Record summary
Chemical mapping of a 177-nucleotide RNA with DMS and 2A3. In probing experiments dimethyl sulfate is read out at A N1 and C N3, which are open when not base-paired. The RNA was probed in 150 mM KOAc, 10 mM MgCl2 and 150 mM bicine (pH 8.5) at 24 C. It was measured as part of the RMDB libraries RFM100 and RFMREP.

[RMDB]
RNA sequence: GGGAACGACUCGAGUAGAGUCGAAAACGAAGCCGGGUGAGCUACCCGUGGGCAGGCUGAAGCGGGGGUAAGACCCCGUGGAGGGCCGAACGCACGUCGGUUGAAAACGGCGGCGAUGACCUGCGGGGUCAUAAAACUGAUUCGUCAGUUUUAUGACAAAAGAAACAACAACAACAAC
Reactivity to DMS in 0.01 (KOAc 150mM, MgCl2 10mM, bicine 150mM(pH8.5), 24C), signal-to-noise 8, nucleotides 027 to 126: c060g010a100a090g010c020c040g010g020g020u010g010a110g010c060u010a240c020c010c000g050u000g010g000g020c030a210g010g000c000u010g010a300a220g010c000g010g000g010g000g000u010a110a170g010a200c010c000c000c000g020u000g000g000a280g010g000g010c010c010g000a120a270c020g000c000a070c010g010u000c010g000g000u000u010g010a120a090a110a100c020g000g000c000g000g000c010g000a130u020g000a120c000c000u000g000c020g000g000g000
Reactivity to 2A3 in 0.01 (KOAc 150mM, MgCl2 10mM, bicine 150mM(pH8.5), 24C), signal-to-noise 9, nucleotides 027 to 126: c020g050a050a010g030c030c010g090g050g100u140g040a070g010c030u060a060c000c000c000g000u010g000g000g000c040a030g000g000c020u070g010a010a000g010c000g000g000g000g000g010u020a040a040g120a180c000c000c000c000g000u000g000g010a040g030g110g000c000c020g010a060a000c010g010c080a160c080g000u000c000g010g050u080u200g090a070a070a010a010c000g000g000c000g000g000c000g040a070u160g070a140c000c000u000g000c000g000g000g010